[RMDB]
RNA sequence: GGGAACGACUCGAGUAGAGUCGAAAAGUGCACAGUCGCUCCCUUCUUCCCUCUUCUCCUGGUAUCAGCCCCCCUAUUCUGGCUGGCUGAGCCCUAGGCUGCCGGUGCAGGGGGUACUCAGGGAGGACCAUAGCUCAAGGUUCGCCUUGAGCUAUGGAAAAGAAACAACAACAACAAC
Reactivity to DMS in 0.01 (KOAc 150mM, MgCl2 10mM, bicine 150mM(pH8.5), 24C), signal-to-noise 2, nucleotides 027 to 126: g020u000g000c080a070c100a070g020u000c010g000c030u000c030c000c020u010u010c120u000u000c020c030c020u000c040u000u000c000u010c010c020u000g020g020u010a120u010c160a100g000c280c010c010c000c000c010u000a100u000u010c020u000g000g000c020u000g000g000c000u000g000a100g010c000c010c060u020a230g000g020c020u000g040c010c030g000g010u000g000c130a050g020g030g000g020g030u010a010c050u020c030a110g010g010g000a040g000g000a070